[RMDB]
RNA sequence: GGGAACGACUCGAGUAGAGUCGAAAAGACGAACAUGGAAAAACCAUAUAUGUUGAUAGACUGUGCACAUUUACAUAUAGAGCUAGUUUUCAAUGGUUUCAUGAUACAGAAGUUCAUUGACUGCAAGGCCUAAACAAACUUUCGAGUUUGUUUAGGCAAAAGAAACAACAACAACAAC
Reactivity to 2A3 in 0.01 (KOAc 150mM, MgCl2 10mM, bicine 150mM(pH8.5), 24C), signal-to-noise 2, nucleotides 027 to 126: g080a000c070g050a080a020c050a050u080g000g060a070a040a000a020a080c050c020a040u080a010u010a000u090g060u050u040g030a060u060a080g070a020c040u070g060u110g150c070a020c000a070u070u090u140a080c030a020u190a000u040a130g050a010g080c020u050a020g040u040u040u000u060c040a040a000u040g010g000u020u010u000c040a030u070g080a010u040a140c020a050g080a060a000g050u080u170c020a050u050u090g030a030c030u050g030c060a070a010g080
Reactivity to DMS in 0.01 (KOAc 150mM, MgCl2 10mM, bicine 150mM(pH8.5), 24C), signal-to-noise 4, nucleotides 027 to 126: g000a120c070g010a070a070c060a030u000g000g020a060a070a040a070a060c040c030a100u010a080u000a050u000g010u000u000g010a030u000a110g020a060c050u010g010u000g010c050a070c080a040u010u000u020a040c130a050u010a070u000a070g000a090g020c060u000a050g020u000u000u000u000c020a040a060u000g020g000u000u000u010c020a030u010g010a120u010a080c170a090g000a080a030g010u010u000c030a040u000u000g000a070c110u000g010c120a060a080g000

Description
Source: RMDB library OK2TRN, as collected in RNAgym. Structure probing data (2A3 and DMS) for a 177-nucleotide construct. For 2A3, 1,758 sequencing reads were counted. DMS adducts were read by reverse transcription with MarathonRT. The RNA was probed in 150 mM KOAc, 10 mM MgCl2 and 150 mM bicine (pH 8.5) at 24 C.